[RMDB]
This 177-nucleotide RNA was probed chemically with 2A3 and DMS. The 2A3 profile rests on 21,797 reads. For DMS, 5,438 sequencing reads were counted. The RNA was probed in 150 mM KOAc, 10 mM MgCl2 and 150 mM bicine (pH 8.5) at 24 C. Values cover nucleotides 27 to 126. For DMS the reverse transcriptase was MarathonRT.
RNA sequence: GGGAACGACUCGAGUAGAGUCGAAAAGUGGUUCAUUGCUUAGCAGCUGCAACAGCACUUUUGCUGUCUUGCUCAGCAAAAGGAGCAAAAAAGGCUUGCUCUAACCCAAAACUCUCAACCUUAGCCACUGCUAUAAUGGAUUCGUCCAUUAUAGCAGAAAAGAAACAACAACAACAAC
Reactivity to 2A3 in 0.01 (KOAc 150mM, MgCl2 10mM, bicine 150mM(pH8.5), 24C), signal-to-noise 9, nucleotides 027 to 126: g110u120g030g020u090u090c090a070u090u090g010c010u030u040a010g010c020a020g030c070u130g020c090a120a020c010a070g050c010a070c090u080u110u140u130g000c000u010g020u040c030u070u150g030c020u010c020a000g000c000a000a000a010a040g060g010a110g000c010a010a030a020a000a030a060g070g010c020u040u060g010c000u000c010u040a050a060c010c010c000a010a070a080a120c060u060c010u020c040a070a130c030c040u080u130a020g020c010c010a030
Reactivity to DMS in 0.01 (KOAc 150mM, MgCl2 10mM, bicine 150mM(pH8.5), 24C), signal-to-noise 4, nucleotides 027 to 126: g010u030g010g000u020u030c240a120u020u010g000c000u000u000a060g030c050a000g010c050u000g000c120a100a130c200a070g010c070a090c150u020u020u010u020g020c000u010g010u000c100u020u030g000c090u020c040a010g020c030a000a020a050a050g010g020a070g010c010a020a010a030a070a090a140g030g010c030u000u000g000c000u000c070u020a100a040c050c020c030a020a050a070a070c080u000c010u020c050a090a070c140c050u010u010a040g000c020c040a160